[RMDB]
RNA sequence: GGGAACGACUCGAGUAGAGUCGAAAAGCAGGCCAACCCGGACCACAUCUGCCAGGAAAACAAGUCUGAAGGAGGCAUCCUCGGCGUCCGAUGAGGCUGACAACGAGGAAGAAGAGGAAAUCGAGGACUGUAUUUCCGAUUUCGAUCGGAAAUACAGAAAAGAAACAACAACAACAAC
Reactivity to DMS in 0.01 (KOAc 150mM, MgCl2 10mM, bicine 150mM(pH8.5), 24C), signal-to-noise 2, nucleotides 027 to 126: g020c090a100g000g000c050c020a100a170c070c010c030g000g010a030c060c110a070c100a040u000c060u000g000c050c050a050g010g020a030a060a070a090c160a070a080g010u000c060u000g060a110a070g000g010a100g020g000c100a120u000c030c010u020c050g010g000c220g010u000c030c050g000a150u010g010a210g010g000c030u010g000a030c100a010a150c050g030a060g010g000a040a090g000a080a050g020a040g000g000a040a070a060u000c030g000a030g000g020a180